[RMDB]
RNA sequence: GGGAACGACUCGAGUAGAGUCGAAAAGUAUAGCGAAGUUAGAGGCGACGAGCUAUACGAUGAAUCAGCCUCCAUUGAUAUCGGUAUACAGAUCUGCGGCGAUCAGAUACCGUAAUUAGUAGCCGCAAUCCGGAGUGGAGACGCACGACGGUCGUCAAAAUAGGACCAUGUUCGCAUGGUCCUAUUUAAAAGAAACAACAACAACAAC
Reactivity to DMS in 0.01 (KOAc 150mM, MgCl2 10mM, bicine 150mM(pH8.5), 24C), signal-to-noise 3, nucleotides 027 to 156: g010u000a020u000a020g000c010g020a170a170g030u010u000a050g010a160g040g030c000g030a060c060g020a300g010c000u010a020u000a030c010g020a120u000g010a060a090u000c090a220g000c010c000u000c020c030a070u020u000g020a130u010a090u000c050g010g010u000a070u010a090c100a170g040a180u000c050u010g030c030g000g000c010g010a110u010c060a190g000a140u000a010c040c020g030u010a020a030u000u000a080g010u000a110g040c000c000g040c030a110a070u000c040c030g000g000a200g010u000g010g000a090g010a060c060g030c090a080c040g040a080c030g020g000u000c110g000u010c040a080
Reactivity to 2A3 in 0.01 (KOAc 150mM, MgCl2 10mM, bicine 150mM(pH8.5), 24C), signal-to-noise 3, nucleotides 027 to 156: g000u000a000u000a000g010c020g100a240a000g020u010u040a010g030a010g020g000c000g020a010c040g010a020g010c010u000a010u000a010c010g000a030u140g110a010a130u160c070a010g010c000c010u010c010c010a160u070u220g100a030u110a070u270c000g000g000u010a020u000a060c050a110g010a010u000c020u140g000c000g020g000c000g010a010u010c010a010g000a040u010a010c000c010g040u010a030a020u050u140a030g120u040a000g000c000c010g040c020a000a060u010c020c010g000g030a020g000u050g020g040a170g030a040c070g040c050a000c000g070a000c020g010g030u050c040g100u090c060a060